[RMDB]
Description
This 207-nucleotide RNA was probed chemically with 2A3.
RNA sequence: GGGAACGACUCGAGUAGAGUCGAAAACUGACUGAACCCUACGGCACUCCAGGCCUCUUCCCUUCUCACUGAGGUGAGAGAGGCAGCCAGAAGCUGAGGUUGUUCAGGAGGCAUUGGGGGCGCCUGGCACAGAGCACACCCGCAGAGACCUGGGCCAAGUAGUGGAUAGUUUCGACUAUCCACUACUAAAAGAAACAACAACAACAAC
Reactivity to 2A3 in 0.01 (KOAc 150mM, MgCl2 10mM, bicine 150mM(pH8.5), 24C), signal-to-noise 2, nucleotides 027 to 156: c070u090g100a070c010u080g030a040a090c030c000c030u070a030c060g020g010c020a030c050u000c000c000a010g040g010c000c000u000c010u050u040c010c030c000u030u070c010u000c000a040c040u090g100a030g170g100u030g000a010g010a010g000a010g020g000c000a000g020c010c000a070g070a160a030g090c130u140g060a050g090g000u100u110g010u120u150c050a020g000g030a000g000g040c150a260u070u100g000g000g000g000g000c020g000c010c000u070g000g000c020a030c010a020g030a010g000c040a050c010a060c070c030c030g040c050a060g020a010g020a050c020c030u050g000g030g060c030c020a010